[RMDB]
RNA sequence: GGGAACGACUCGAGUAGAGUCGAAAAGGGGUCUUUCGUUGUCAGCUGUUGACGGAAUCCUUGAGGCUGAUGACCAUGGCUGAAGCCUCCACGGCCAUGCAAGGCCAAGAUGAGGGAUUCCGUCAACAGCUUGGAUUUACGAAAGACGGAGGCACCCGAAUCACAUAUUCUUCGGAAUAUGUGAUUCAAAAGAAACAACAACAACAAC
Reactivity to 2A3 in 0.01 (KOAc 150mM, MgCl2 10mM, bicine 150mM(pH8.5), 24C), signal-to-noise 2, nucleotides 027 to 156: g030g010g010g000u010c010u010u010u000c020g000u010u010g030u040c050a040g020c010u010g000u000u000g000a010c000g000g010a000a000u010c010c010u010u050g030a040g040g000c020u020g020a230u080g060a150c020c020a080u080g040g000c010u040g030a110a010g020c000c020u020c000c010a040c030g000g000c010c010a030u090g020c080a090a130g000g000c010c020a030a040g120a080u300g090a100g000g040g010a000u000u010c020c000g010u000c000a010a000c000a000g000c000u000u010g010g000a000u020u020u300a000c000g000a000a010a000g010a000c020g000g020a020g000g030c030a050c010c010c000
Reactivity to DMS in 0.01 (KOAc 150mM, MgCl2 10mM, bicine 150mM(pH8.5), 24C), signal-to-noise 2, nucleotides 027 to 156: g010g000g000g030u010c000u010u000u000c020g060u020u000g030u000c030a090g050c000u000g020u000u000g020a090c000g010g000a050a020u010c010c000u000u000g010a170g020g050c000u050g010a150u010g000a090c290c070a050u020g020g010c020u000g000a180a140g030c010c000u000c000c040a300c060g020g050c000c000a040u040g030c280a120a140g000g010c000c010a050a170g000a180u000g000a160g010g020g010a050u000u000c000c000g020u010c000a010a000c030a020g000c020u000u000g010g010a080u000u020u000a070c040g010a040a020a020g000a050c010g000g020a030g000g000c030a190c030c040c080